RNA sequence: GGGAACGACUCGAGUAGAGUCGAAAACGUGUUAUGUAAAUUCAGUAACCCUCCUAUGGCGUAAAUGAUGCGCCACUAGCGAAAGAGAAAAGCCAAAGGGCGUAGUCAUAGGGUAUGACGGAUGAGAUUGUUAUAAGGAAUUCGUUCCUUAUAACAAAAAAGAAACAACAACAACAAC
Reactivity to DMS in 0.01 (KOAc 150mM, MgCl2 10mM, bicine 150mM(pH8.5), 24C), signal-to-noise 9, nucleotides 027 to 126: c090g010u010g010u010u010a050u010g010u010a040a080a170u010u000c040a100g010u020a090a110c050c020c020u010c010c010u000a010u000g000g010c010g020u010a060a090a110u040g010a210u020g000c000g000c000c000a000c030u000a070g000c010g010a080a100a140g010a170g010a110a080a100a190g010c010c010a030a060a020g000g000g000c000g020u000a040g010u000c000a000u000a010g000g000g010u020a040u010g010a080c090g000g000a100u010g000a100g000a160
Reactivity to 2A3 in 0.01 (KOAc 150mM, MgCl2 10mM, bicine 150mM(pH8.5), 24C), signal-to-noise 9, nucleotides 027 to 126: c060g050u050g050u140u110a110u100g110u150a060a150a140u120u060c020a020g060u050a050a060c010c000c010u040c010c000u010a000u000g020g000c010g060u080a030a100a150u210g100a080u150g020c000g000c000c000a000c000u000a000g000c020g060a040a120a020g190a030g040a040a100a030a000g010c020c000a170a300a010g010g000g000c000g000u000a020g010u010c000a000u010a000g010g020g020u060a090u130g050a030c040g020g020a020u070g040a050g020a070